[RMDB]
RNA sequence: GGGAACGACUCGAGUAGAGUCGAAAACUCUCCUCCAUCGCACUUCAGAAGUGCUGCGAUGGGCAGAAGGGCAGCUGACACUCCGUGAUGUCCCUCAUUCUGUGUUCCUCCGUGAGCUCAGGGAAGACGACAUGUAAAGGUUCGCCUUUACAUGUCGAAAAGAAACAACAACAACAAC
Reactivity to DMS in 0.01 (KOAc 150mM, MgCl2 10mM, bicine 150mM(pH8.5), 24C), signal-to-noise 3, nucleotides 027 to 126: c080u000c020u000c000c040u010c010c010a040u000c020g000c000a020c050u000u000c210a190g020a140a090g020u000g000c180u010g010c050g010a010u000g000g000g010c160a040g000a060a030g000g020g020c070a040g000c130u000g010a080c050a070c010u000c020c030g000u010g010a130u020g010u000c010c030c030u000c110a140u030u010c040u010g010u000g010u000u000c010c030u000c090c210g020u020g000a070g000c020u010c040a050g000g020g000a070a130g010a190
Reactivity to 2A3 in 0.01 (KOAc 150mM, MgCl2 10mM, bicine 150mM(pH8.5), 24C), signal-to-noise 3, nucleotides 027 to 126: c020u020c010u000c010c000u000c000c010a000u000c010g010c010a020c020u130u110c080a170g050a300a040g190u030g070c090u000g000c000g010a020u010g020g010g000c020a020g030a100a040g000g020g020c020a040g000c010u040g010a000c010a010c080u030c020c010g020u040g020a050u080g030u050c020c000c000u020c020a080u110u050c000u020g060u000g020u020u030c010c020u160c030c050g110u190g030a000g020c000u010c010a010g000g030g030a040a030g090a030
This 177-nucleotide RNA was probed chemically with DMS and 2A3. 2A3 adducts were read by reverse transcription with SuperScript II with manganese. The reactions ran in a buffer of 150 mM KOAc, 10 mM MgCl2 and 150 mM bicine (pH 8.5), at 24 C. DMS adducts were read by reverse transcription with MarathonRT.